[RMDB]
RNA sequence: GGGAACGACUCGAGUAGAGUCGAAAAGGGCUUACUAUUUUGUCCAGGUGACUCAGGGAGCCUUAUUAAUAGGUGACUUUUCAUUCAGUCAACAAACAUCUGUAAGAUAGUUACCGUACAUUGUACUGUAUUCUGGGUGCUGGGGAUGUAGCUAAACCCACAGUUAUUUCUUCGGAAAUAACUGUGGAAAAGAAACAACAACAACAAC
Reactivity to 2A3 in 0.01 (KOAc 150mM, MgCl2 10mM, bicine 150mM(pH8.5), 24C), signal-to-noise 3, nucleotides 027 to 156: g030g000g000c010u100u070a100c010u140a210u110u150u120u110g040u000c010c030a020g070g070u070g100a030c020u020c080a010g020g000g010a040g000c000c000u030u050a090u040u200a080a100u070a050g030g010u010g030a030c000u160u140u040u060c070a110u070u010c010a030g050u020c070a030a090c070a100a200a020c050a090u060c020u030g060u090a030a050g010a050u040a020g020u020u000a000c010c030g020u020a020c030a110u090u180g000u060a030c010u030g030u140a100u080u010c030u030g010g030g020u060g040c040u020g020g000g000g010a020u070g020u070a010g000c000u030a060a060a130c010
Reactivity to DMS in 0.01 (KOAc 150mM, MgCl2 10mM, bicine 150mM(pH8.5), 24C), signal-to-noise 2, nucleotides 027 to 156: g010g000g020c040u000u000a120c050u020a100u010u000u000u020g070u010c040c010a130g000g010u000g030a090c020u000c100a140g040g040g010a300g000c020c040u010u010a140u000u030a150a150u000a040g060g020u000g000a080c030u000u000u000u000c060a300u000u000c040a050g010u000c060a190a190c110a160a100a090c050a110u010c040u020g020u020a060a100g000a070u000a020g040u000u010a010c060c030g070u000a070c040a080u000u000g030u000a060c060u020g000u000a120u000u000c000u000g050g000g000u010g000c020u010g000g010g020g000a080u010g000u000a040g040c050u020a040a070a120c110